Structure probing data (2A3 and DMS) for a 177-nucleotide construct. Source: RMDB library TTRDES, as collected in RNAgym. The 2A3 profile rests on 4,037 reads. Conditions: 150 mM KOAc, 10 mM MgCl2 and 150 mM bicine (pH 8.5), 24 C.
RNA sequence: GGGAACGACUCGAGUAGAGUCGAAAAGAUAUGGAGUCCCGUUAGGGAGCGAAGUAUUCGGAAACGAAUACAUCGCGACGAUCUAACUGUAGGACUCCUAAGUCAAACUCGGUCGUUCGCGACCGAGCCAAAACUUUGUGUUCGCACAAAGUUUUGGAAAAGAAACAACAACAACAAC
Reactivity to 2A3 in 0.01 (KOAc 150mM, MgCl2 10mM, bicine 150mM(pH8.5), 24C), signal-to-noise 1, nucleotides 027 to 126: g020a010u040a020u090g000g010a010g020u000c000c030c000g010u000u010a010g000g030g000a010g000c000g000a070a010g000u000a000u000u000c000g000g030a030a030a010c000g010a010a000u000a010c000a030u020c010g000c010g020a190c000g000a010u000c010u020a020a020c070u230g300u300a300g000g090a010c020u000c000c000u000a020a000g010u020c020a020a050a260c000u000c000g000g000u000c000g050u020u050c040g020c020g000a020c010c010g000a000g060
Reactivity to DMS in 0.01 (KOAc 150mM, MgCl2 10mM, bicine 150mM(pH8.5), 24C), signal-to-noise 2, nucleotides 027 to 126: g030a030u020a300u000g000g010a000g030u000c000c030c190g000u000u000a010g000g000g000a030g020c000g020a020a110g020u010a000u000u010c000g020g000a130a070a140c000g010a010a010u000a000c000a050u010c000g030c000g010a050c300g010a030u010c000u000a000a020c010u020g040u010a080g020g000a010c000u000c000c000u000a010a060g000u000c020a100a140a300c010u000c010g020g010u000c000g040u000u010c210g040c000g010a010c010c000g010a000g000
Notes
Reactivities are rounded to 0.1 and cut off at 0 and 3.